[RMDB]
RNA sequence: GGGAACGACUCGAGUAGAGUCGAAAAUGUGUGUACCGUGGAGUAUUAUCCAGCCUUAAAGAGGAAGGGAAUUCUGUUACAUGCUACAACAGGGAUGAACCCUGAGGUCCUUAUGCUCCGUGAAUUGAAGGGAGAACGUUUUCGAACGUUCUCCCUUAAAAGAAACAACAACAACAAC
Reactivity to DMS in 0.01 (KOAc 150mM, MgCl2 10mM, bicine 150mM(pH8.5), 24C), signal-to-noise 1, nucleotides 027 to 126: u000g010u000g020u000g000u000a010c140c060g000u000g000g020a000g010u010a150u010u000a130u000c020c010a070g010c010c020u000u010a080a070a090g030a030g030g020a110a050g040g010g010a120a090u000u000c110u030g020u000u000a020c050a000u000g020c030u000a030c050a020a120c030a020g000g000g000a240u000g020a190a160c010c010c000u000g010a020g000g020u000c030c020u000u000a060u000g040c060u000c030c010g020u030g010a100a050u000u000g020
Conditions: 150 mM KOAc, 10 mM MgCl2 and 150 mM bicine (pH 8.5), 24 C. This 177-nucleotide RNA was probed chemically with DMS. DMS adducts were read by reverse transcription with MarathonRT. For DMS, 1,009 sequencing reads were counted. It was measured as part of the RMDB library OK2TRN.